RNA sequence: GGGAACGACUCGAGUAGAGUCGAAAACAGUAUGUAUCCGACCGCGAAGGACAAUGCCCUGUACAUUCGCAUUCGAGCACAGCAACCCUCCAAGAGUCGACAGUUCAUGUCCUGGAGAAAGGAGCGGCUUUAACGCCAAGUUCGCUUGGCGUUAAAGAAAAGAAACAACAACAACAAC
Reactivity to DMS in 0.01 (KOAc 150mM, MgCl2 10mM, bicine 150mM(pH8.5), 24C), signal-to-noise 3, nucleotides 027 to 126: c060a130g020u000a060u010g030u000a080u010c030c050g000a120c080c060g000c040g010a080a050g000g010a080c070a050a070u020g030c110c070c060u010g000u000a070c120a100u010u000c050g040c080a150u000u000c060g020a070g000c060a070c100a090g010c050a040a120c040c050c010u010c050c070a040a130g000a110g020u000c070g000a080c040a040g000u010u020c100a090u010g000u000c000c000u000g000g040a040g010a050a040a070g000g000a160g000c040g010g000
Reactivity to 2A3 in 0.01 (KOAc 150mM, MgCl2 10mM, bicine 150mM(pH8.5), 24C), signal-to-noise 1, nucleotides 027 to 126: c060a020g300u300a070u270g070u070a110u050c020c030g040a030c010c030g030c020g010a030a020g060g000a010c030a060a090u110g020c000c000c000u020g000u020a120c050a140u010u120c040g000c010a010u040u000c030g040a040g060c040a010c030a080g020c010a140a000c010c030c000u010c010c000a070a020g040a060g190u090c000g030a010c010a000g010u060u130c100a020u110g020u040c040c010u030g060g030a070g060a030a090a000g040g030a090g020c040g010g010
This 177-nucleotide RNA was probed chemically with DMS and 2A3. The DMS profile rests on 1,797 reads. 2A3 adducts were read by reverse transcription with SuperScript II with manganese.